[RMDB]
Conditions: 150 mM KOAc, 10 mM MgCl2 and 150 mM bicine (pH 8.5), 24 C. An RNA of 177 nucleotides, treated with 2A3 and DMS and read out base by base.
RNA sequence: GGGAACGACUCGAGUAGAGUCGAAAAACGGAUAGUGGUACGCCACUAUCCGAAACAGCACCUGGCCGAUUUCAUGUAAUAUCUGAAAAGAAAAGAUAUUACAUGUAUCGGGUAGGAGCUGUUUGAAUAAUAUUUGAUGUUUCGACAUCAAAUAUUAAAAAGAAACAACAACAACAAC
Reactivity to 2A3 in 0.01 (KOAc 150mM, MgCl2 10mM, bicine 150mM(pH8.5), 24C), signal-to-noise 4, nucleotides 027 to 126: a010c010g000g000a000u000a000g010u000g010g020u040a040c220g040c030c000a000c000u000a000u000c000c000g000a000a000a000c000a000g010c000a030c010c000u070g130g100c010c000g010a010u080u200u140c000a000u010g000u000a000a000u000a000u010c010u020g080a110a140a130a120g150a020a090a040a000g000a080u000a000u000u000a000c000a000u000g000u000a000u000c000g000g000g020u000a000g000g000a010g000c000u000g000u000u010u040g000a010a010
Reactivity to DMS in 0.01 (KOAc 150mM, MgCl2 10mM, bicine 150mM(pH8.5), 24C), signal-to-noise 9, nucleotides 027 to 126: a300c010g000g000a000u000a000g020u000g010g010u010a090c260g020c000c000a010c000u000a000u000c000c010g010a000a010a000c000a000g010c000a120c000c000u000g000g010c000c000g000a010u000u030u010c000a010u000g000u000a000a010u000a000u000c000u000g000a110a100a150a190g020a140a100a130a020g000a010u000a000u000u000a000c000a000u000g000u000a000u000c000g010g000g000u000a000g010g010a040g020c000u000g000u000u000u000g000a080a080